[RMDB]
RNA sequence: GGGAACGACUCGAGUAGAGUCGAAAAACGGCGGGUUGCCGAUCACGAUCCGGCUCGCCGAGAACACCGGCCACGGCACCCAUGCGCGCCAGCCGGUCUCGCCGUCGGGCCGCCGCCAGCCGACCUAAGUCAUUAGCAGUUUCGACUGCUAAUGACUAAAAGAAACAACAACAACAAC
Reactivity to DMS in 0.01 (KOAc 150mM, MgCl2 10mM, bicine 150mM(pH8.5), 24C), signal-to-noise 2, nucleotides 027 to 126: a220c120g010g010c000g020g000g020u010u000g030c080c080g000a060u000c080a110c130g000a050u000c130c050g000g000c020u000c020g020c060c010g010a070g010a120a030c240a150c030c000g030g000c010c080a120c160g000g000c010a010c000c000c190a170u000g020c150g030c040g010c000c040a100g020c040c020g010g020u010c040u020c010g000c140c060g000u020c020g050g000g000c010c000g030c040c090g020c020c010a080g010c040c010g010a150c030c010u000a100
Reactivity to 2A3 in 0.01 (KOAc 150mM, MgCl2 10mM, bicine 150mM(pH8.5), 24C), signal-to-noise 1, nucleotides 027 to 126: a000c030g000g030c050g020g040g010u050u130g070c140c060g000a030u170c060a060c220g010a030u030c040c030g010g010c030u010c020g020c020c010g000a020g030a030a080c160a020c000c010g000g060c000c030a230c120g000g000c020a050c010c050c020a080u270g110c150g000c010g010c070c010a000g000c000c000g020g030u010c010u000c000g080c030c040g060u140c020g010g020g000c000c040g000c010c000g000c020c010a000g020c000c020g070a060c010c010u090a070